Source information:
Structure probing data (2A3 and DMS) for a 207-nucleotide construct. As a SHAPE reagent, 2A3 marks flexible, mostly unpaired nucleotides at the ribose 2'-OH. The RNA was probed in 150 mM KOAc, 10 mM MgCl2 and 150 mM bicine (pH 8.5) at 24 C. Reactivities are given for positions 27 through 156.

RNA sequence: GGGAACGACUCGAGUAGAGUCGAAAAUCCGUUCACCCACUGCUCGAGAACCUCUUCCCUUCCCCCGCGGUUCUUCUUCGAUUCGGACCGGCCCAUCUCGACUAGAGGCGGCAGUCCUCAGUACUCUUACUCUUUUCUGUAAAGAGGAGACUGCUGGCUUAAUGAGGUAGUUCGCUACCUCAUUAAGAAAAGAAACAACAACAACAAC
Reactivity to 2A3 in 0.01 (KOAc 150mM, MgCl2 10mM, bicine 150mM(pH8.5), 24C), signal-to-noise 2, nucleotides 027 to 156: u130c070c000g040u060u070c100a180c020c010c010a100c050u020g000c000u010c020g030a030g060a280a220c030c060u030c070u020u040c000c000c000u010u030c020c010c010c020c000g010c020g010g000u070u030c010u050u000c000u040u120c060g130a130u090u090c050g010g000a010c000c010g070g000c010c000c000a120u050c020u020c030g150a160c150u100a080g010a020g060g000c000g020g000c000a000g000u000c010c000u010c010a040g030u060a060c030u010c000u090u080a300c020u070c020u040u180u180u070c070u150g170u260a020a030a020g010a000g000g000a000g000a000c010u020g000c020u000g000g000
Reactivity to DMS in 0.01 (KOAc 150mM, MgCl2 10mM, bicine 150mM(pH8.5), 24C), signal-to-noise 2, nucleotides 027 to 156: u010c100c090g030u010u000c070a130c000c000c030a270c060u000g000c010u000c040g020a080g010a070a110c080c080u000c020u010u000c010c000c000u000u010c020c010c000c030c000g030c080g010g010u010u000c030u010u000c030u000u000c040g000a170u000u030c050g000g020a080c020c030g020g080c010c010c010a150u000c040u000c050g000a140c080u000a130g020a050g000g000c060g020g010c050a240g030u000c020c000u000c010a140g000u000a030c060u000c000u010u000a070c030u000c020u020u010u000u020c180u010g000u010a050a020a060g040a030g000g000a150g020a040c060u000g010c030u020g010g030